[RMDB]
Annotation
Conditions: 150 mM KOAc, 10 mM MgCl2 and 150 mM bicine (pH 8.5), 24 C. The record gives the reactivity of an RNA of 207 nucleotides to 2A3. Reactivities are given for positions 27 through 156.
RNA sequence: GGGAACGACUCGAGUAGAGUCGAAAAGUUAUGCUCUCGCUGCCUAAUGGCGGUGCGGGAAACCCACUCUAAAGUCCUUAGGGUUAGCCCCUUAAGGCGGGGUUCGGAGGAACCUGGCAACAGAAGCUGAAACUGUGCACAUUCGUGUGCACAGUAAUACCAACCAGUCAUUCGUGACUGGUUGGUAAAAAGAAACAACAACAACAAC
Reactivity to 2A3 in 0.01 (KOAc 150mM, MgCl2 10mM, bicine 150mM(pH8.5), 24C), signal-to-noise 2, nucleotides 027 to 156: g010u040u050a120u270g040c020u000c000u020c030g010c000u020g010c000c000u280a300a120u270g010g010c020g010g100u020g000c030g020g050g000a040a040a040c000c040c000a050c020u130c060u160a140a070a220g300u000c000c000u000u000a000g000g000g040u040u080a010g000c000c000c000c000u000u030a000a000g010g000c000g010g020g000g000u020u000c030g000g100a100g060g020a030a000c000c000u030g270g050c000a030a080c030a140g090a100a040g010c090u210g090a200a060a060c000u000g000u000g010c000a000c000a000u100u050c130g090u040g010u000g030c000a000c000a000g000u010a000a000